[RMDB]
RNA sequence: GGGAACGACUCGAGUAGAGUCGAAAAGCUCAUGUUCGGCCUGACGGAUCUGAGCCGGAAGUUCGACAACAUCGCAGCGCGUAGCGACAUGGACGGUCGUGAUCUUGACCGGCAUGAACGCUGGAUCAUGGAUCUCUACGAUCUCGCGAAGGUGCCACGAUUAUAGCAUCUUCGGAUGCUAUAAUCGAAAAGAAACAACAACAACAAC
Reactivity to 2A3 in 0.01 (KOAc 150mM, MgCl2 10mM, bicine 150mM(pH8.5), 24C), signal-to-noise 8, nucleotides 027 to 156: g040c010u010c030a040u070g050u080u040c020g020g000c040c080u090g060a060c020g040g030a070u090c050u150g060a050g050c000c000g030g020a040a020g030u050u050c020g040a030c040a130a020c010a070u050c040g050c130a030g030c020g000c020g090u080a010g010c000g040a030c030a060u090g050g060a110c030g010g000u030c030g050u080g100a110u040c070u080u150g020a030c020c000g010g000c020a040u110g080a170a040c040g000c010u020g010g030a080u030c040a090u140g070g030a070u040c060u000c010u080a040c100g030a050u020c040u040c020g020c010g040a070a030g030g040u040g040c020c010a050
Reactivity to DMS in 0.01 (KOAc 150mM, MgCl2 10mM, bicine 150mM(pH8.5), 24C), signal-to-noise 3, nucleotides 027 to 156: g020c020u010c020a030u000g010u000u000c000g030g060c060c090u000g000a220c030g020g010a080u000c190u020g010a080g010c000c020g010g040a080a130g000u000u010c050g000a130c040a110a060c050a160u000c020g030c040a110g020c070g030c030g010u000a090g030c040g000a180c030a060u000g020g010a100c040g010g030u000c000g040u000g030a080u000c050u000u000g000a070c000c000g000g060c050a080u010g000a060a080c040g000c000u000g000g010a060u020c010a050u000g060g000a100u000c040u000c050u000a050c040g010a260u000c000u020c060g000c000g040a090a190g010g020u000g000c000c050a120
An RNA of 207 nucleotides, treated with 2A3 and DMS and read out base by base. Reactivities are given for positions 27 through 156. Conditions: 150 mM KOAc, 10 mM MgCl2 and 150 mM bicine (pH 8.5), 24 C. For 2A3 the reverse transcriptase was SuperScript II with manganese. Source: RMDB library OK3TST, as collected in RNAgym.